[RMDB]
RNA sequence: GGGAACGACUCGAGUAGAGUCGAAAAUGACGUUCGCGUCACAGCCGUCCUAAGUCCACCGGGAGAACCCUUACAGAUCGUGGUCGGAAACGACCACGAAAUAUUUCUGUAAGGUUCGACGAUCGGUGGAUAUGGAGAAUGAUCCCUUCGGGGAUAACAUAUCAAUUACCUUCGGGUAAUUGAUAUGAAAAGAAACAACAACAACAAC
Reactivity to DMS in 0.01 (KOAc 150mM, MgCl2 10mM, bicine 150mM(pH8.5), 24C), signal-to-noise 2, nucleotides 027 to 156: u000g030a030c000g020u000u010c270g040c050g000u000c010a030c060a160g030c060c020g050u000c000c000u010a100a260g000u000c000c000a050c000c010g010g020g000a190g010a030a070c100c030c020u000u000a010c010a020g010a030u000c000g060u000g020g010u000c010g000g040a170a140a300c010g020a030c000c000a000c020g020a000a030a040u010a140u000u000u000c000u000g000u010a010a020g000g000u000u000c010g020a190c120g020a040u000c000g010g030u000g010g020a010u010a030u000g000g010a110g000a090a140u000g010a080u000c010c000c000u000u000c300g030g030g000g020a030u000a050a260
Reactivity to 2A3 in 0.01 (KOAc 150mM, MgCl2 10mM, bicine 150mM(pH8.5), 24C), signal-to-noise 4, nucleotides 027 to 156: u040g000a000c020g010u050u060c300g040c010g120u030c020a020c060a080g110c030c030g100u010c000c000u060a120a080g030u000c000c000a000c000c000g010g000g000a030g000a030a010c100c020c000u000u000a000c010a000g000a020u010c000g010u000g000g000u010c020g010g020a120a100a040c010g000a000c000c000a000c000g010a000a000a010u130a020u000u130u020c000u000g000u000a000a000g010g010u000u000c010g020a040c000g010a020u020c000g000g020u000g000g000a000u000a000u010g000g020a040g070a050a140u190g070a020u020c010c000c000u010u030c200g040g000g000g000a000u020a050a020
Chemical mapping of a 207-nucleotide RNA with DMS and 2A3. The DMS profile rests on 4,950 reads. Conditions: 150 mM KOAc, 10 mM MgCl2 and 150 mM bicine (pH 8.5), 24 C. For 2A3 the reverse transcriptase was SuperScript II with manganese. The 2A3 profile rests on 5,154 reads. Reactivities are given for positions 27 through 156.